Notes: An RNA of 177 nucleotides, treated with 2A3 and DMS and read out base by base. For DMS, 13,835 sequencing reads were counted. Source: RMDB library M2PK90, as collected in RNAgym. DMS adducts were read by reverse transcription with MarathonRT. The RNA was probed in 150 mM KOAc, 10 mM MgCl2 and 150 mM bicine (pH 8.5) at 24 C.
[RMDB]
RNA sequence: GGGAACGACUCGAGUAGAGUCGAAAAUUAUAUAGCGUGUGCAAGACGCUGAACUUGCCAUGAUCUGGAACUUUAGUGCUGAGGUCCGAGUUCCAGAUCAUCAUUUCGGACCUCAGCUCUAAUAUAAUAGUUACAACAUAUUCGUAUGUUGUAACUAAAAAGAAACAACAACAACAAC
Reactivity to 2A3 in 0.01 (KOAc 150mM, MgCl2 10mM, bicine 150mM(pH8.5), 24C), signal-to-noise 4, nucleotides 027 to 126: u120u030a060u020a030u090a170g040c010g020u030g090u120g040c010a000a010g030a030c050g050c300u060g030a080a020c010u010u010g010c000c010a040u030g030a110u060c030u050g080g050a040a100c040u070u050u050a070g010u040g050c000u000g000a000g000g000u000c000c020g010a000g030u080u040c040c000a020g020a010u020c000a000u000c000a010u050u130u040c000g000g000a000c000c000u000c000a000g000c000u000c000u010a010a020u080a010u030a100a140
Reactivity to DMS in 0.01 (KOAc 150mM, MgCl2 10mM, bicine 150mM(pH8.5), 24C), signal-to-noise 8, nucleotides 027 to 126: u010u010a100u020a150u010a070g020c010g020u000g000u010g010c070a030a040g000a090c050g030c130u000g010a070a100c030u000u010g000c010c080a040u000g000a090u000c050u000g000g010a080a110c170u000u000u000a040g010u000g000c000u000g000a010g010g010u000c010c010g010a030g010u000u000c060c070a060g000a050u000c090a030u010c180a080u000u010u000c020g010g000a020c000c000u000c000a000g000c000u000c020u000a020a040u000a070u000a080a130